Source: RMDB libraries RFM100 and RFMREP, as collected in RNAgym. Structure probing data (2A3 and DMS) for a 177-nucleotide construct. Values cover nucleotides 27 to 126. The reactions ran in a buffer of 150 mM KOAc, 10 mM MgCl2 and 150 mM bicine (pH 8.5), at 24 C. For DMS the reverse transcriptase was MarathonRT.

RNA sequence: GGGAACGACUCGAGUAGAGUCGAAAACUUUCCUUUCAAUGGGCUGGUAUGAUUUAUGAAGGAUGCGAGAGCGAAACUGGGAAGUUCGAAGACUCGUGAAUGGCUUUUACGGCUCCACGAGUUCGAAUUAAUAUUGACCAUUCGUGGUCAAUAUUAAAAAAGAAACAACAACAACAAC
Reactivity to 2A3 in 0.01 (KOAc 150mM, MgCl2 10mM, bicine 150mM(pH8.5), 24C), signal-to-noise 9, nucleotides 027 to 126: c010u030u030u030c010c000u040u100u080c080a070a070u110g030g050g010c030u030g010g020u100a090u110g100a150u100u150u140a130u170g090a090a030g040g020a020u070g030c030g020a050g000a000g050c040g040a070a030a020c030u030g020g010g030a040a010g000u010u030c010g030a060a020g050a050c000u000c000g000u010g020a080a100u140g030g000c020u000u040u070u210a080c090g000g000c010u020c040c000a000c000g000a000g000u020u020c010g000a000a000
Reactivity to DMS in 0.01 (KOAc 150mM, MgCl2 10mM, bicine 150mM(pH8.5), 24C), signal-to-noise 9, nucleotides 027 to 126: c150u010u010u000c000c010u000u010u010c100a090a110u020g000g010g010c040u000g000g020u010a040u010g000a080u010u010u030a080u020g010a110a090g010g010a060u010g010c070g010a080g010a080g010c050g000a050a070a070c060u010g010g010g010a080a070g020u000u000c030g000a070a110g000a070c010u000c010g000u000g000a080a100u030g010g000c010u000u000u020u040a150c220g000g000c000u000c180c010a030c010g000a010g000u000u000c020g010a050a080